Structure probing data (2A3 and DMS) for a 177-nucleotide construct.
[RMDB]
RNA sequence: GGGAACGACUCGAGUAGAGUCGAAAAGCGCAGCGCCACCUCGAGCACCGGGACGUCGAACUUCGGAUCGUGGGUGAGCACGCAGAUCACCGUGCGCUCGUCGAUACCACCCGCCUCCGCCUGGGCACAGGCACACCGUAUUCGUACGGUGUGCCUGAAAAGAAACAACAACAACAAC
Reactivity to 2A3 in 0.01 (KOAc 150mM, MgCl2 10mM, bicine 150mM(pH8.5), 24C), signal-to-noise 4, nucleotides 027 to 126: g020c040g000c040a040g020c020g010c040c000a020c010c000u030c020g070a030g060c030a050c060c060g000g030g060a070c060g070u130c080g040a150a080c040u130u100c060g060g020a060u040c010g010u100g030g010g020u080g050a030g000c010a000c030g020c030a020g050a120u140c030a030c140c010g000u030g030c000g020c030u010c010g050u020c030g010a020u050a110c000c030a020c010c010c000g020c020c000u010c010c000g040c010c000u050g020g020g020c070a020
Reactivity to DMS in 0.01 (KOAc 150mM, MgCl2 10mM, bicine 150mM(pH8.5), 24C), signal-to-noise 2, nucleotides 027 to 126: g000c090g010c060a050g010c050g000c000c000a140c000c020u020c060g020a100g000c100a080c030c120g010g010g010a080c160g030u010c130g000a040a220c160u000u000c050g000g000a020u020c060g010u050g000g000g070u000g070a070g000c070a090c040g020c070a050g000a150u000c080a010c080c000g000u000g000c040g040c000u020c010g020u070c050g000a060u070a100c050c070a080c030c000c060g010c020c030u000c060c020g030c000c020u030g020g040g000c040a180